This 177-nucleotide RNA was probed chemically with 2A3 and DMS. For DMS the reverse transcriptase was MarathonRT. The DMS profile rests on 9,764 reads. The reactions ran in a buffer of 150 mM KOAc, 10 mM MgCl2 and 150 mM bicine (pH 8.5), at 24 C.
RNA sequence: GGGAACGACUCGAGUAGAGUCGAAAACUGCCAGCACGUGUGAGCAGCGGAUCCAUGCACACACAGACGCUCAUCGCAAGAGCUUGUGUGAUGACAGUGGCUUUUGUGGCGUGCUUUUUUGGGCGUCAUAAAAUUAAAUAUUCGUAUUUAAUUUUAUAAAAGAAACAACAACAACAAC
Reactivity to 2A3 in 0.01 (KOAc 150mM, MgCl2 10mM, bicine 150mM(pH8.5), 24C), signal-to-noise 5, nucleotides 027 to 126: c020u060g040c030c030a030g000c030a020c030g060u100g020u060g090a110g010c020a010g020c040g050g040a020u030c040c010a020u060g030c000a010c000a000c000a000c010a030g150a120c100g020c000u010c010a090u150c070g060c170a150a040g000a010g000c000u030u030g030u000g020u020g030a180u070g030a070c030a070g140u060g040g000c000u050u050u040u040g020u030g070g010c010g000u020g050c000u170u140u060u020u080u080g060g000g010c000g030u010c020
Reactivity to DMS in 0.01 (KOAc 150mM, MgCl2 10mM, bicine 150mM(pH8.5), 24C), signal-to-noise 4, nucleotides 027 to 126: c040u010g000c050c030a110g000c000a030c020g020u010g000u010g010a120g010c020a070g020c080g000g010a080u020c040c030a080u000g010c010a050c010a010c010a010c030a060g000a060c140g000c010u000c010a070u020c220g020c220a140a080g000a020g020c010u020u000g010u020g010u000g010a120u020g010a080c050a050g010u020g010g000c060u010u000u000u020g020u000g010g000c020g000u000g000c000u000u010u010u020u030u020g010g000g010c000g000u000c030